[RMDB]
The data come from the RNA Mapping Database (RMDB), library OK1LIB. Chemical mapping of a 177-nucleotide RNA with DMS and 2A3. For 2A3 the reverse transcriptase was SuperScript II with manganese. For DMS the reverse transcriptase was MarathonRT. For 2A3, 7,627 sequencing reads were counted. Conditions: 150 mM KOAc, 10 mM MgCl2 and 150 mM bicine (pH 8.5), 24 C.
RNA sequence: GGGAACGACUCGAGUAGAGUCGAAAAGAAGCGUCGCGGCAGUCGCGUGACGCUACAUCCACGGUCAGCGGUAGUACCUCGGUCGGCGGGGAGUAGCGUCGGGAGACUAGGCGCGCUUUGCCGUGGGCCGCGUAUGAACGUUCGCGUUCGUACGCGGAAAAGAAACAACAACAACAAC
Reactivity to DMS in 0.01 (KOAc 150mM, MgCl2 10mM, bicine 150mM(pH8.5), 24C), signal-to-noise 4, nucleotides 027 to 126: g010a070a020g030c010g020u040c010g020c000g040g020c120a090g010u020c060g010c050g020u000g010a010c000g000c000u000a020c030a110u020c020c010a050c020g000g000u000c170a090g030c140g000g000u010a090g000u020a300c010c010u000c020g010g010u000c030g030g020c040g000g000g000g010a070g000u020a000g010c010g000u010c000g000g000g000a150g020a050c000u000a120g000g000c010g000c030g000c030u010u010u000g000c000c000g010u030g000g000g000
Reactivity to 2A3 in 0.01 (KOAc 150mM, MgCl2 10mM, bicine 150mM(pH8.5), 24C), signal-to-noise 3, nucleotides 027 to 126: g030a030a000g000c000g040u050c010g030c010g030g080c060a010g080u060c040g010c030g080u020g000a000c000g000c000u000a000c010a020u000c000c000a000c000g000g000u020c010a010g000c000g010g010u020a020g000u040a030c000c010u020c020g000g040u020c000g010g040c050g000g020g010g010a060g030u040a000g000c000g000u000c000g000g030g010a090g000a000c000u030a030g050g000c020g000c000g000c000u010u020u070g030c000c000g000u050g000g030g000